[RMDB]
RNA sequence: GGGAACGACUCGAGUAGAGUCGAAAACCAUGGUUGUGUCUGCGGGUCAAGAGCAAACUAACUGUAAUACUAGUUCCUUAGCUUAUUACGAACCUGUGCAGGGUCGUAAAAUGCUGAUGGCUCUUCUAUACUGGGAACUUCGGUUCCCAGAAAAGAAACAACAACAACAAC
Reactivity to 2A3 in 0.01 (KOAc 150mM, MgCl2 10mM, bicine 150mM(pH8.5), 24C), signal-to-noise 2, nucleotides 027 to 129: c000c000a100u060g220g000u000u020g000u000g080u040c050u010g010c100g070g000g030u020c000a000a000g000a000g090c000a080a030a030c000u050a030a030c010u040g090u180a160a000u100a230c050u040a000g020u070u050c000c000u080u030a000g020c030u000u090a000u050u000a180c000g000a120a160c000c000u080g030u180g040c120a050g000g000g020u000c000g000u000a000a000a000a000u160g000c000u000g000a000u070g100g000c030u030c000u160u060c090u110a060u070a190
Reactivity to DMS in 0.01 (KOAc 150mM, MgCl2 10mM, bicine 150mM(pH8.5), 24C), signal-to-noise 5, nucleotides 027 to 129: c030c050a020u090g000g050u050u010g080u000g000u050c030u070g030c160g110g010g050u070c100a060a070g000a120g080c020a060a020a120c100u030a060a150c070u050g000u050a030a170u050a160c150u020a080g050u020u040c050c010u050u050a020g000c020u020u010a250u020u020a050c090g020a110a100c030c010u020g030u080g030c180a130g040g020g060u000c000g060u030a000a000a040a160u040g010c050u020g030a070u040g000g080c070u050c050u060u000c030u020a040u060a030